[RMDB]
RNA sequence: GGGAACGACUCGAGUAGAGUCGAAAAACAACCAGUGGCACCACCCCGCCACCGGUGGUCAGCAGCAGCACCAGCAGUGCAGGCAAGGCGCCGGCCCUGACCAGCGACGAGGUGUCCACCAGUGCCGGAGUUAACUACCUUUCGAGGUAGUUAACUCAAAAGAAACAACAACAACAAC
Reactivity to 2A3 in 0.01 (KOAc 150mM, MgCl2 10mM, bicine 150mM(pH8.5), 24C), signal-to-noise 2, nucleotides 027 to 126: a010c060a020a020c020c020a010g030u070g020g000c010a020c030c000a040c010c010c020c030g010c010c030a060c020c010g000g080u020g000g000u010c010a010g000c010a000g000c010a000g010c010a040c050c000a050g030c070a050g060u060g100c020a030g040g020c020a070a170g120g000c040g000c030c010g040g000c010c020c000u030g000a050c000c030a010g090c010g060a070c020g030a050g020g010u050g040u080c000c050a050c020c030a080g020u030g080c020c030g070
Reactivity to DMS in 0.01 (KOAc 150mM, MgCl2 10mM, bicine 150mM(pH8.5), 24C), signal-to-noise 3, nucleotides 027 to 126: a100c110a110a060c050c050a080g020u000g000g000c050a050c080c050a080c060c040c020c050g000c030c030a130c150c040g000g030u000g000g010u000c030a040g000c120a080g010c070a120g010c010a030c020c000a160g010c060a110g040u000g010c130a090g010g010c010a090a110g010g000c050g020c020c020g000g010c020c190c010u000g000a010c010c020a050g000c020g000a050c030g000a060g040g000u010g020u000c030c020a050c040c050a050g010u010g030c000c030g010